[RMDB]
RNA sequence: GGGAACGACUCGAGUAGAGUCGAAAACAAAAGCUUUCGCAUCUCAAACGAUGAGCUUAUGGUUCUUGUCAGAUGCAAUGGGACAAUCAUUUAACGCACAAUUAACACAAUUAUUUAAUGCUGACACGCCGUACUGCCCUUUCGAGGGCAGUACGGCAAAAGAAACAACAACAACAAC
Reactivity to 2A3 in 0.01 (KOAc 150mM, MgCl2 10mM, bicine 150mM(pH8.5), 24C), signal-to-noise 1, nucleotides 027 to 126: c000a100a100a100a000g000c000u000u040u000c020g000c050a160u070c000u140c180a000a260a000c000g020a000u180g000a000g010c000u300u200a130u240g050g050u040u000c000u000u000g000u000c110a050g000a110u070g000c000a140a000u230g020g000g000a180c150a110a130u300c020a020u080u290u300a000a000c040g040c050a060c020a020a090u220u120a300a070c090a050c130a090a000u050u050a020u140u300u190a160a020u210g020c000u000g160a000c200a000c110